[RMDB]
RNA sequence: GGGAACGACUCGAGUAGAGUCGAAAAUCCCAAAGGUUGCCGAAUCCGAAAGGUUCGGAGGAACCGCUUUUUGGGGUUAAUCUGCAGUGAAGCUGCAGUAGGGAUACCUUCUGUCCCGCACCCGACAGCUAACUCCAGAGGCAAUAAAGGAAGGAGAACCUAAUUUAGGGUUCGCCCUAAAUUAGGUAAAAGAAACAACAACAACAAC
Reactivity to 2A3 in 0.01 (KOAc 150mM, MgCl2 10mM, bicine 150mM(pH8.5), 24C), signal-to-noise 1, nucleotides 027 to 156: u000c000c000c040a000a050a000g020g000u010u010g030c010c010g030a040a030u070c020c020g120a130a080a010g000g010u000u030c010g000g010a000g020g040a020a000c030c000g000c030u080u130u020u080u080g000g020g000g000u030u010a010a050u030c000u000g000c000a000g010u070g240a140a060g130c000u010g000c000a000g000u000a030g000g030g000a000u040a070c000c000u000u000c000u000g000u000c000c010c000g000c000a070c010c080c000g010a040c040a000g000c000u020a030a030c000u000c020c010a010g000a030g040g020c000a010a010u130a190a060a010g070g010a000a000g010g020a040g040a050
Reactivity to DMS in 0.01 (KOAc 150mM, MgCl2 10mM, bicine 150mM(pH8.5), 24C), signal-to-noise 3, nucleotides 027 to 156: u000c000c000c000a100a180a140g030g030u000u000g030c000c040g010a120a210u010c000c000g000a140a160a220g050g050u000u000c000g030g010a150g000g010a160a050c050c010g000c050u000u020u010u010u000g050g060g000g030u000u000a040a130u000c010u010g000c000a050g040u000g020a120a190g030c010u010g000c000a050g010u000a050g010g010g040a090u000a070c020c040u000u000c020u010g020u010c300c020c010g020c030a110c030c010c070g010a130c050a060g040c030u010a130a080c030u000c010c020a050g010a050g000g060c030a080a150u000a080a110a090g000g010a090a050g020g020a240g000a070
Annotation
Chemical mapping of a 207-nucleotide RNA with 2A3 and DMS. Values cover nucleotides 27 to 156. For 2A3, 1,690 sequencing reads were counted.